[RMDB]
RNA sequence: GGGAACGACUCGAGUAGAGUCGAAAAAGCCUUUACAGCUGGACAAAUCAGCAAAGUAAAAGCAUUUAACGAUAAGAACGGAAACCGUAUGGCGUUCGCUUCUGUUGAUACUCAAGAGGGUGUCAGAGAGUUAGUCAUCUUUAGUUACAUCUAUGGAAGUCCAUACGUAUUUCGAUACGUAUGGACUAAAAGAAACAACAACAACAAC
Reactivity to 2A3 in 0.01 (KOAc 150mM, MgCl2 10mM, bicine 150mM(pH8.5), 24C), signal-to-noise 3, nucleotides 027 to 156: a000g040c000c000u010u000u010a040c030a020g000c000u000g010g000a120c080a080a060a110u120c000a010g000c040a160a040a000g040u030a000a010a000a060g010c020a020u110u100u220a110a040c050g020a030u080a180a090g060a090a000c090g010g080a170a090a010c070c030g060u110a100u060g020g070c050g000u100u090c090g010c050u050u100c010u060g110u100u010g010a030u050a080c010u010c050a110a060g110a080g080g040g000u000g000u030c010a000g020a020g000a000g070u050u100a030g030u090c010a030u040c100u070u170u100a020g020u000u060a110c040a100u080c100u080a160u050g080g050a140
Reactivity to DMS in 0.01 (KOAc 150mM, MgCl2 10mM, bicine 150mM(pH8.5), 24C), signal-to-noise 2, nucleotides 027 to 156: a120g010c010c000u000u000u010a000c020a300g040c030u040g000g000a220c170a070a150a150u000c010a000g010c000a070a060a170g000u000a020a040a030a000g000c000a180u010u000u000a080a140c090g030a120u000a130a110g030a040a030c020g010g000a040a010a010c010c020g010u000a090u010g020g020c020g040u010u000c020g020c020u010u010c040u000g020u000u020g020a180u000a060c030u020c040a060a130g000a250g050g000g000u010g000u000c000a040g010a190g000a120g010u010u000a030g000u000c080a080u000c030u010u000u010a120g000u000u000a120c110a090u020c090u030a120u000g010g000a140